The record gives the reactivity of an RNA of 207 nucleotides to 2A3. The 2A3 profile rests on 1,495 reads. The reactions ran in a buffer of 150 mM KOAc, 10 mM MgCl2 and 150 mM bicine (pH 8.5), at 24 C.
RNA sequence: GGGAACGACUCGAGUAGAGUCGAAAACUCGCUGCUUAAGCAGUGAGCCCUCUGCCCGGAUUUGUCUGUGGAUCCGGAGCCGAAAGGCGCGCGGAGGGUCAUGAAACACGGAAUCGUGCGCAUUCUAGUCUGUGGGAUGCGUGCUAAAUUAAAGCAGGAAUAUGUACCCCUUCGGGGGUACAUAUUCAAAAGAAACAACAACAACAAC
Reactivity to 2A3 in 0.01 (KOAc 150mM, MgCl2 10mM, bicine 150mM(pH8.5), 24C), signal-to-noise 2, nucleotides 027 to 156: c000u000c010g000c000u010g000c010u300u300a170a070g000c010a000g010u000g030a010g000c010c000c000u000c000u000g020c000c000c000g000g000a000u020u010u000g020u000c000u020g020u010g010g000a000u000c000c010g050g010a030g010c000c000g090a100a010a000g000g010c040g000c000g010c000g060g000a000g010g000g000u000c000a010u190g030a020a110a040c010a000c000g020g000a030a020u000c020g000u010g000c000g010c000a010u000u010c000u020a050g140u050c010u020g020u020g010g000g000a000u000g020c000g010u000g000c000u020a070a090a100u290u240a170a090a000g030c000a020g020